[RMDB]
RNA sequence: GGGAACGACUCGAGUAGAGUCGAAAAGAAAGAAAGAAAGAAGGCAAUGUACUGCAAAGUAGUGAACAUAAUUUAUCGUGAGAUUUAUUAUUAGAUAUUAUGCUCAUUUCUUUGGAUAUGUUGUAAAGGUACCAACACUCUUCGGAGUGUUGGUACCAAAAGAAACAACAACAACAAC
Reactivity to 2A3 in 0.01 (KOAc 150mM, MgCl2 10mM, bicine 150mM(pH8.5), 24C), signal-to-noise 1, nucleotides 027 to 126: g130a040a040a000g110a020a090a000g090a030a170a050g070a020a010g080g000c000a070a060u080g000u010a080c040u060g110c000a000a000a000g000u000a000g000u050g000a010a010c000a000u040a010a020u060u110u100a020u000c010g030u300g070a110g040a100u020u150u150a220u300u070a020u100u070a100g000a000u010a000u010u000a000u000g000c000u000c000a000u060u000u000c000u010u010u000g000g040a000u040a040u070g000u020u020g000u020a000a000a190